[RMDB]
RNA sequence: GGGAACGACUCGAGUAGAGUCGAAAAGAGAGGCUCCUGUGUUGUUGAACCUGCCCAGUUGUGGGUGCAACCUUGUACCAGGCAGCCCGACCCUGACCUAAAGUAAAUUCCUAGGAGAACUGUUUUCACAGAGUCCGUUAUUCGUAACGGACUCUGUAAAAGAAACAACAACAACAAC
Reactivity to DMS in 0.01 (KOAc 150mM, MgCl2 10mM, bicine 150mM(pH8.5), 24C), signal-to-noise 2, nucleotides 027 to 126: g000a090g010a240g000g000c000u000c000c030u000g000u020g010u020u010g000u000u000g020a040a010c000c030u010g000c000c040c130a070g010u000u050g030u020g000g000g010u010g020c040a010a020c030c300u000u040g010u020a060c090c030a020g000g000c200a030g000c000c030c040g010a150c050c020c010u000g020a080c070c010u000a090a150a130g070u060a060a060a180u020u000c040c030u010a020g000g000a150g010a060a150c100u000g000u000u000u010u020c140
Reactivity to 2A3 in 0.01 (KOAc 150mM, MgCl2 10mM, bicine 150mM(pH8.5), 24C), signal-to-noise 2, nucleotides 027 to 126: g100a030g050a030g060g000c030u060c000c000u010g000u000g040u160u030g010u000u030g000a060a010c000c000u000g020c000c000c020a070g080u170u140g000u040g000g000g010u000g040c000a000a090c040c110u150u120g070u020a050c020c000a010g000g000c090a000g010c000c010c000g050a050c010c010c000u060g120a040c030c030u070a100a110a000g010u080a150a300a140u210u180c040c010u060a070g030g010a050g030a120a040c020u010g000u070u000u030u130c010
Source: RMDB library RFM100, as collected in RNAgym. The record gives the reactivity of an RNA of 177 nucleotides to DMS and 2A3. For 2A3, 696 sequencing reads were counted. The reactions ran in a buffer of 150 mM KOAc, 10 mM MgCl2 and 150 mM bicine (pH 8.5), at 24 C. The DMS profile rests on 2,607 reads.